[RMDB]
RNA sequence: GGGAACGACUCGAGUAGAGUCGAAAAACUAUGUAUCUCACAGGAAGGAAAAAGUAGAUUGUCUAAACAUAGCCUAGUGAUUUAUUAGCAUAUUAAUUUGCUUUGCCUUCCCUGUUGUAGGAGGGAGAGGGAGAAGAAAGGAGAGUAUGGGUGAGGAACUACCUACCCCGUUCGCGGGGUAGGUAGUAAAAGAAACAACAACAACAAC
Reactivity to 2A3 in 0.01 (KOAc 150mM, MgCl2 10mM, bicine 150mM(pH8.5), 24C), signal-to-noise 1, nucleotides 027 to 156: a000c090u130a060u150g030u090a070u010c030u050c040a110c050a010g000g000a010a010g010g000a070a300a000a000a000g030u040a040g000a010u000u040g020u020c030u130a060a010a110c070a100u090a040g020c020c040u130a110g030u060g130a150u040u160u170a030u010u090a040g020c010a040u040a080u300u010a100a000u030u050u000g020c000u000u060u000g040c000c000u000u000c000c000c000u010g030u070u020g060u040a010g000g010a090g000g030g010a050g000a000g010g000g000a080g000a020a010g020a050a000a000g030g000a060g020a000g090u150a030u100g000g000g030u070g000a090g000g010a000